[RMDB]
Chemical mapping of a 170-nucleotide RNA with DMS and 2A3.
RNA sequence: GGGAACGACUCGAGUAGAGUCGAAAACCGGGAUGGGCCGCAUACCGAGCGAAGGAUACCGGUAAGGGGAGAGGAGGAAUCCCGAGGGGAUCGCCCACUAAAGAGUAGAGGAAUUCUCGGAAAGCUCGUACGCUAGUGUUCGCACUAGCGAAAAGAAACAACAACAACAAC
Reactivity to DMS in 0.01 (KOAc 150mM, MgCl2 10mM, bicine 150mM(pH8.5), 24C), signal-to-noise 9, nucleotides 027 to 129: c000c040g030g020g040a070u020g030g020g040c070c050g070c060a110u060a110c110c000g000a100g040c090g030a070a060g010g000a080u030a080c000c010g050g020u030a070a030g020g030g010g020a070g030a010g000g000a060g020g030a060a080u030c060c010c020g020a080g000g000g000g000a030u000c130g030c020c010c010a080c110u020a060a070a070g040a010g050u060a050g020a010g000g000a070a020u020u010c020u040c010g010g030a030a050a050g030c020u030c040g040u000a100
Reactivity to 2A3 in 0.01 (KOAc 150mM, MgCl2 10mM, bicine 150mM(pH8.5), 24C), signal-to-noise 9, nucleotides 027 to 129: c000c000g000g000g010a060u060g010g010g000c000c010g020c040a040u060a150c030c020g020a020g020c060g030a040a010g030g010a010u060a090c020c010g010g020u070a060a070g020g010g000g000a030g000a020g010g010a010g000g010a020a030u030c000c010c010g010a040g010g010g000g000a010u040c030g030c010c010c000a050c010u140a100a100a030g070a030g050u120a020g010a010g030g030a060a050u100u010c030u020c000g010g030a060a020a010g020c030u020c060g070u060a040
Conditions: 150 mM KOAc, 10 mM MgCl2 and 150 mM bicine (pH 8.5), 24 C. DMS adducts were read by reverse transcription with MarathonRT.